[RMDB]
RNA sequence: GGGAACGACUCGAGUAGAGUCGAAAAGAUAUGGACCUCUGGCGAUAAGCUGAGGUUCGGAAACGAACCCAGCUUUUGACGCCAUGUCCUAAGUCAAAAGAACAUACUCGUUCGCGAGUAUGUUCAACACGAAAUAAGUCUUCGGACUUAUUUCGUGAAAAGAAACAACAACAACAAC
Reactivity to 2A3 in 0.01 (KOAc 150mM, MgCl2 10mM, bicine 150mM(pH8.5), 24C), signal-to-noise 3, nucleotides 027 to 126: g030a020u070a040u140g000g010a000c010c010u010c010u030g010g000c020g030a080u010a090a000g000c000u000g070a200g130g000u000u010c000g000g000a060a050a000c010g000a000a000c000c010c010a010g000c000u100u040u100u170g220a110c010g000c000c010a010u100g000u000c010c000u010a110a020g080u020c040a000a040a050a240g010a010a000c000a000u000a000c000u000c020g030u070u080c300g000c010g120a000g010u000a000u000g000u000u000c000a000a010
Reactivity to DMS in 0.01 (KOAc 150mM, MgCl2 10mM, bicine 150mM(pH8.5), 24C), signal-to-noise 4, nucleotides 027 to 126: g000a060u000a300u000g000g000a000c010c000u010c010u000g000g020c010g020a110u000a020a010g020c000u000g010a130g010g010u000u000c000g010g000a100a090a200c010g010a010a010c000c010c010a010g000c000u000u000u010u010g020a160c050g000c010c010a000u020g000u000c000c000u000a020a110g010u010c030a080a060a140a140g000a010a010c010a010u000a010c000u000c000g020u000u010c230g020c000g000a010g010u000a000u000g000u000u010c000a050a150